Annotation:
The record gives the reactivity of an RNA of 177 nucleotides to 2A3 and DMS. For DMS, 15,050 sequencing reads were counted. The RNA was probed in 150 mM KOAc, 10 mM MgCl2 and 150 mM bicine (pH 8.5) at 24 C. It was measured as part of the RMDB library OK2TRN. 2A3 adducts were read by reverse transcription with SuperScript II with manganese. For 2A3, 5,793 sequencing reads were counted.
RNA sequence: GGGAACGACUCGAGUAGAGUCGAAAAGAUGUUCACCCUGGAUCGCGAGGAGCUUCGGCUCAUCGUGUGGGAGUUAGUGGCCAGACACAGUGCGAGCCGGCCGGCGGCGCCGAUCCCGUUGGCCUCGCAGACAAACACUUUUCGAAGUGUUUGUCUGAAAAGAAACAACAACAACAAC
Reactivity to 2A3 in 0.01 (KOAc 150mM, MgCl2 10mM, bicine 150mM(pH8.5), 24C), signal-to-noise 3, nucleotides 027 to 126: g080a070u170g040u090u080c060a150c010c010c010u040g070g050a110u140c000g010c010g020a010g000g010a010g010c000u020u120c230g120g000c010u010c010a020u030c000g010u010g010u060g030g030g010a100g010u080u170a060g020u090g060g000c030c020a030g030a060c020a010c010a070g080u090g080c020g020a020g050c040c020g060g050c060c090g010g020c010g040g020c020g010c040c040g030a070u040c000c010c010g020u020u020g020g000c000c010u010c020g020
Reactivity to DMS in 0.01 (KOAc 150mM, MgCl2 10mM, bicine 150mM(pH8.5), 24C), signal-to-noise 7, nucleotides 027 to 126: g010a130u010g010u010u000c050a110c020c040c030u000g000g010a090u000c040g020c010g010a040g010g010a020g010c010u000u010c190g030g020c000u000c010a030u000c010g020u000g020u010g000g000g000a100g010u010u000a090g020u000g000g010c030c040a090g000a100c080a080c090a080g010u000g010c030g010a120g020c070c070g000g010c080c070g010g010c010g000g000c090g000c060c070g000a080u000c050c010c040g000u000u000g010g000c010c010u010c080g000